The data come from the RNA Mapping Database (RMDB), library OK2TST. This 177-nucleotide RNA was probed chemically with DMS and 2A3.
RNA sequence: GGGAACGACUCGAGUAGAGUCGAAAAUACGGGCCUAACCUCAACACCCAGAAUUUCAACCUUAUUGCUAUUGAACUGCUAAUCAGAGGUUUUGAGGUUUAUCUAGACUACUGGUUAGAUGGGGAGAAUUUAAUGGACUAUUCGUAGUCCAUUAAAUAAAAGAAACAACAACAACAAC
Reactivity to DMS in 0.01 (KOAc 150mM, MgCl2 10mM, bicine 150mM(pH8.5), 24C), signal-to-noise 9, nucleotides 027 to 126: u010a120c140g010g010g010c040c030u000a050a070c020c010u000c020a040a050c110a070c020c010c040a170g000a100a080u000u010u000c060a050a100c140c060u000u010a080u010u010g010c110u010a130u000u000g010a140a110c130u000g000c070u000a040a050u000c070a080g010a300g010g000u000u000u000u000g000a010g010g010u010u010u010a040u010c070u000a060g010a050c040u000a110c080u000g010g000u000u000a020g000a070u000g020g000g000g010a230g000a090
Reactivity to 2A3 in 0.01 (KOAc 150mM, MgCl2 10mM, bicine 150mM(pH8.5), 24C), signal-to-noise 2, nucleotides 027 to 126: u100a010c030g020g030g020c010c020u030a020a030c020c000u010c010a020a030c010a040c030c020c020a010g090a070a110u090u110u070c040a060a060c020c020u130u180a130u150u230g010c030u050a060u160u060g040a080a050c040u060g000c030u060a030a010u040c020a020g050a260g120g000u020u010u010u030g020a010g010g000u050u070u050a050u000c020u020a020g050a080c020u070a060c030u090g040g010u030u030a030g010a150u070g010g000g010g010a070g050a060
The reactions ran in a buffer of 150 mM KOAc, 10 mM MgCl2 and 150 mM bicine (pH 8.5), at 24 C. For DMS, 18,988 sequencing reads were counted. Reactivities are given for positions 27 through 126. DMS adducts were read by reverse transcription with MarathonRT.